[RMDB]
Chemical mapping of a 177-nucleotide RNA with 2A3 and DMS. The 2A3 profile rests on 6,114 reads. The data come from the RNA Mapping Database (RMDB), library TTRDEL. Conditions: 150 mM KOAc, 10 mM MgCl2 and 150 mM bicine (pH 8.5), 24 C.

RNA sequence: GGGAACGACUCGAGUAGAGUCGAAAAGAUAUGGAGUAGUUGCUUGUCAGCUCGGGAGGGUCGGAAACGACCCAGAGCUUGGAUUUAGGCACUCUACUCCUAAGUCAAAGGGGACUUCGGUCCCCAAGAUGAUAAAUUUCUUCGGAAAUUUAUCAUCAAAAGAAACAACAACAACAAC
Reactivity to 2A3 in 0.01 (KOAc 150mM, MgCl2 10mM, bicine 150mM(pH8.5), 24C), signal-to-noise 3, nucleotides 027 to 126: g010a020u060a040u150g000g000a000g000u000a000g000u020u010g010c030u080u150g050u100c020a010g010c000u000c010g040g080g140a300g040g010g000u010c010g020g010a090a040a050c010g000a010c010c010c000a010g000a000g000c000u020u130g080g010a040u100u110u300a080g000g020c010a020c070u090c000u010a000c000u000c000c000u010a120a030g030u020c040a060a070a070g000g000g000g000a000c010u060u100c300g120g000u000c000c000c000c000a000a020
Reactivity to DMS in 0.01 (KOAc 150mM, MgCl2 10mM, bicine 150mM(pH8.5), 24C), signal-to-noise 3, nucleotides 027 to 126: g010a050u000a300u000g000g000a030g010u000a000g010u000u000g010c010u000u000g010u000c020a030g000c010u010c000g000g010g020a120g010g000g020u000c000g010g000a080a120a190c010g010a010c010c000c010a050g010a010g000c000u000u010g030g010a070u010u010u020a030g000g010c020a020c170u000c010u000a000c010u000c000c010u010a010a070g000u000c030a080a140a150g000g000g010g000a030c000u000u000c200g010g010u000c000c000c000c000a000a010